[RMDB]
RNA sequence: GGGAACGACUCGAGUAGAGUCGAAAACCGCGGUAAUACGAACUGCGCGAACGUUAUUCGGAUUCACUGGGCUUAAAGGGUGCGUAGGCGGCCUGUUAAGUAGGGCGUGAAAUCUGUCGGCUCAACCAUAUACCCUGAAGUUCGCUUCAGGGUAUAUAAAAGAAACAACAACAACAAC
Reactivity to DMS in 0.01 (KOAc 150mM, MgCl2 10mM, bicine 150mM(pH8.5), 24C), signal-to-noise 8, nucleotides 027 to 126: c030c000g020c070g000g000u000a050a050u020a070c090g000a080a050c060u010g010c030g010c060g000a060a060c070g010u010u010a090u010u010c030g000g000a070u010u010c050a040c050u000g000g010g010c030u000u010a070a060a070g000g000g010u010g010c050g020u030a100g010g010c020g000g000c010c010u000g000u010u020a030a060g010u010a090g020g000g010c060g010u010g000a050a050a060u020c040u010g000u010c050g010g000c040u000c060a080a110c130c090
Reactivity to 2A3 in 0.01 (KOAc 150mM, MgCl2 10mM, bicine 150mM(pH8.5), 24C), signal-to-noise 9, nucleotides 027 to 126: c020c000g010c020g010g010u120a100a070u100a170c040g040a090a020c050u050g010c020g010c030g040a050a030c040g030u080u090a060u100u080c030g010g020a020u050u030c020a020c070u070g010g070g000c010u040u070a080a050a060g060g060g010u060g020c030g050u040a040g050g060c010g020g040c000c000u060g040u110u060a100a040g010u050a060g040g050g000c030g000u040g050a040a050a040u040c040u030g040u050c000g010g000c000u010c040a000a020c010c000